[RMDB]
RNA sequence: GGGAACGACUCGAGUAGAGUCGAAAACACUAGACUUAGGAUCUAGCGCCAUUGGCGUGGGGGUUCGACUCCCUUCAUCCGCACUUUACAGUACUUAAUUGUACUGAAAAAAACUGGGGUUGCUGGCCAGUAUUAAAUGCUUCGGCAUUUAAUACUGAAAAGAAACAACAACAACAAC
Reactivity to DMS in 0.01 (KOAc 150mM, MgCl2 10mM, bicine 150mM(pH8.5), 24C), signal-to-noise 2, nucleotides 027 to 126: c060a140c050u000a020g000a030c020u010u040a160g000g000a140u000c030u000a120g000c020g010c020c020a140u020u010g020g020c030g000u010g040g000g030g000g010u000u010c100g000a240c090u000c020c000c020u000u030c090a100u030c020c020g000c130a080c180u040u010u030a130c000a030g010u000a000c010u000u000a080a060u040u000g010u000a000c010u020g000a000a000a020a080a060a070a060c030u010g020g010g000g030u010u010g020c040u000g000g030c300
Reactivity to 2A3 in 0.01 (KOAc 150mM, MgCl2 10mM, bicine 150mM(pH8.5), 24C), signal-to-noise 5, nucleotides 027 to 126: c070a010c020u040a030g040a040c030u130u180a130g050g070a140u040c020u020a020g000c000g010c000c000a290u080u300g010g000c040g010u070g000g100g000g000g010u050u070c060g090a070c030u040c010c000c000u040u080c050a080u030c030c010g060c040a070c040u070u070u150a060c000a010g000u000a000c000u060u140a070a160u300u100g000u010a000c000u010g020a080a010a000a000a000a000a010c080u060g000g050g000g000u030u030g020c020u010g030g040c010
Chemical mapping of a 177-nucleotide RNA with DMS and 2A3. Conditions: 150 mM KOAc, 10 mM MgCl2 and 150 mM bicine (pH 8.5), 24 C. For DMS, 3,215 sequencing reads were counted. The data come from the RNA Mapping Database (RMDB), library OK1LIB. DMS adducts were read by reverse transcription with MarathonRT.